[RMDB]
RNA sequence: GGGAACGACUCGAGUAGAGUCGAAAAUAAUCGUAAUCGAUUAUAGCUAUAGCUAUAUAUAUAAUGCAUCGAUGCCGCGCGCGUAAUUAAUGCAUUAUACGAUCGAUAUAUCGGCCGCGGCCGAUCGCCCCGAAUUAAAUUUCGAUUUAAUUCGGGGAAAAGAAACAACAACAACAAC
Reactivity to DMS in 0.01 (KOAc 150mM, MgCl2 10mM, bicine 150mM(pH8.5), 24C), signal-to-noise 2, nucleotides 027 to 126: u020a080a030u010c010g000u000a150a090u010c010g000a180u000u000a010u000a000g000c000u000a190u020a190g010c000u010a010u020a040u020a300u010a000u010a010a020u000g000c010a000u010c040g000a020u000g020c010c010g000c140g040c270g000c060g030u000a060a040u000u000a070a000u000g000c000a000u000u000a000u000a100c090g000a030u010c010g000a010u000a110u000a100u000c050g020g020c050c050g020c250g050g080c000c050g010a030u000c140g010
Reactivity to 2A3 in 0.01 (KOAc 150mM, MgCl2 10mM, bicine 150mM(pH8.5), 24C), signal-to-noise 2, nucleotides 027 to 126: u100a010a060u050c000g020u060a060a070u030c000g030a000u000u060a020u040a020g000c010u140a100u200a300g000c000u000a010u000a060u000a020u000a020u000a130a000u020g000c000a010u010c030g030a000u060g000c010c000g060c030g030c020g010c020g100u060a120a030u070u030a050a010u050g000c000a000u020u020a000u000a000c040g030a020u070c000g020a010u040a000u020a000u200c020g000g000c010c000g020c120g090g000c040c010g030a030u020c020g000